RNA sequence: GGGAACGACUCGAGUAGAGUCGAAAAAUCGCACCAUGACUAGUGACCAUGGUACUCAUGGCAUAGUACAUACACGACCAUGGCCAUGUACAUGGUACCGUACCGUCUAGCAUGAGAGUGUGGUACAGACUAACCGUAUAUUCGUAUACGGUUAGUCAAAAGAAACAACAACAACAAC
Reactivity to DMS in 0.01 (KOAc 150mM, MgCl2 10mM, bicine 150mM(pH8.5), 24C), signal-to-noise 9, nucleotides 027 to 126: a050u000c040g020c030a030c010c000a030u010g000a150c040u000a060g020u010g010a070c130c050a030u000g000g020u010a030c070u000c040a020u000g010g000c030a060u000a050g020u000a050c030a050u000a150c170a130c260g000a080c120c070a020u010g000g010c010c040a020u000g000u000a070c030a020u000g000g000u000a020c060c070g020u000a060c130c090g010u000c030u010a050g000c010a040u010g000a140g000a120g000u000g010u000g010g030u000a080c180a130
Reactivity to 2A3 in 0.01 (KOAc 150mM, MgCl2 10mM, bicine 150mM(pH8.5), 24C), signal-to-noise 9, nucleotides 027 to 126: a000u050c020g000c010a010c000c010a010u030g120a210c030u030a020g040u010g120a060c020c030a030u040g000g010u030a030c060u090c120a010u010g010g000c020a080u050a050g040u090a140c010a030u130a030c080a030c200g130a040c060c040a030u020g020g000c000c010a030u040g010u030a080c000a010u020g000g000u000a020c020c020g010u020a040c020c030g050u050c030u030a010g010c010a030u040g020a040g020a020g140u030g010u040g020g020u040a040c030a040